[RMDB]
RNA sequence: GGGAACGACUCGAGUAGAGUCGAAAAACGUCAUAGAGGGUGAGAAUCCCGUCUUUGGCUGCUGGACCGCGCCCAUGCGAAGUUCCUUCGACGAGUCGAGUUGUUUGGGAAUGCAGCUCUAAGUGGGCUGAAAAUACAUCUUCGGAUGUAUUUUCAGAAAAGAAACAACAACAACAAC
Reactivity to DMS in 0.01 (KOAc 150mM, MgCl2 10mM, bicine 150mM(pH8.5), 24C), signal-to-noise 9, nucleotides 027 to 126: a110c110g000u010c010a030u000a030g010a220g000g010g010u010g000a210g010a260a190u020c000c000c000g000u010c010u000u010u010g000g010c010u000g020c110u010g000g000a090c050c060g010c060g010c040c050c060a060u030g010c040g010a110a110g010u000u000c020c040u000u000c020g000a040c020g000a160g010u000c030g010a050g000u000u010g000u000u010u000g000g010g000a070a060u020g000c060a050g000c020u000c030u020a060a090g030u010g010g000g010
Reactivity to 2A3 in 0.01 (KOAc 150mM, MgCl2 10mM, bicine 150mM(pH8.5), 24C), signal-to-noise 9, nucleotides 027 to 126: a000c020g010u010c000a010u010a040g020a020g020g000g000u010g010a040g030a050a080u070c000c000c000g150u010c000u030u020u020g020g000c020u050g020c050u070g040g020a030c020c000g000c000g030c000c020c020a050u130g020c010g040a080a030g050u090u050c010c000u020u030c010g020a040c010g020a040g140u040c010g010a000g010u000u010g030u030u040u040g070g020g010a090a040u110g010c020a010g010c010u010c020u040a120a080g050u090g010g030g000

The record gives the reactivity of an RNA of 177 nucleotides to DMS and 2A3. DMS adducts were read by reverse transcription with MarathonRT. The RNA was probed in 150 mM KOAc, 10 mM MgCl2 and 150 mM bicine (pH 8.5) at 24 C.